[RMDB]
RNA sequence: GGGAACGACUCGAGUAGAGUCGAAAAUUUUCUUGUUAACCAAAUGGCGAAGUUGUUGAUAGUAACACAACCCAACAAAGAUACGAGCUUCAAUAGGCUUGCCAGUGACUCCGGAGUAGAGUUGCUCAACAAACUUCGUAUUCGUACGAAGUUUGUUAAAAGAAACAACAACAACAAC
Reactivity to DMS in 0.01 (KOAc 150mM, MgCl2 10mM, bicine 150mM(pH8.5), 24C), signal-to-noise 2, nucleotides 027 to 126: u010u000u010u000c030u000u010g010u020u000a100a130c070c050a040a170a100u010g030g010c020g010a100a100g000u000u010g020u010u000g010a070u000a080g010u000a040a040c080a080c110a060a140c050c020c030a030a080c120a030a100a100g010a120u020a060c090g000a110g000c040u000u000c180a070a070u000a080g000g010c010u000u000g000c050c070a080g010u010g000a050c030u030c050c000g010g010a090g020u000a090g020a060g010u000u000g000c040u000c170